An RNA of 207 nucleotides, treated with DMS and 2A3 and read out base by base. For 2A3 the reverse transcriptase was SuperScript II with manganese. It was measured as part of the RMDB library OK3TST. For 2A3, 5,034 sequencing reads were counted.

[RMDB]
RNA sequence: GGGAACGACUCGAGUAGAGUCGAAAAAUGGAAGAGUGAGAGGUGGGGUCUCUGAACACUGACUCAACAGUAGUGUGGGGGUCUCAUAGGAAGCAGAGGUGCCUUUGGGGUGAGCAGAGAGAAUUAGCACUUGCCUUCCUGCACAGCCCCGUGGGGCCAUGCUACUUGAAUUCGUUCAAGUAGCAUGAAAAGAAACAACAACAACAAC
Reactivity to DMS in 0.01 (KOAc 150mM, MgCl2 10mM, bicine 150mM(pH8.5), 24C), signal-to-noise 2, nucleotides 027 to 156: a100u000g010g000a050a020g000a120g040u000g010a040g010a050g000g050u000g010g010g030g010u000c010u000c040u000g010a060a080c030a060c030u010g010a040c090u010c090a050a090c130a200g030u000a040g010u010g030u000g010g020g030g040g000u000c040u000c030a080u000a090g010g030a050a060g000c050a120g010a100g000g010u010g030c020c030u030u000u000g020g020g020g020u010g000a160g040c030a030g000a060g010a040g010a060a080u010u000a060g000c090a110c110u000u000g010c080c020u000u010c000c010u010g000c040a050c100a300g020c000c000c000c010g020u010g000g020g050g040c110
Reactivity to 2A3 in 0.01 (KOAc 150mM, MgCl2 10mM, bicine 150mM(pH8.5), 24C), signal-to-noise 5, nucleotides 027 to 156: a010u120g010g000a040a000g030a030g050u130g020a070g010a010g020g020u050g000g010g000g020u020c000u010c020u070g130a100a010c030a020c050u090g200a060c020u100c150a100a100c040a140g040u090a030g000u040g020u050g030g010g000g010g010u000c010u020c030a040u100a040g030g020a020a010g020c030a020g010a010g080g040u090g020c000c020u050u080u200g010g000g000g000u040g020a020g000c020a000g100a000g020a010g040a140a120u160u090a080g050c040a050c150u030u100g010c000c000u060u040c000c000u000g000c020a100c030a010g000c000c000c000c000g000u100g010g000g000g000c000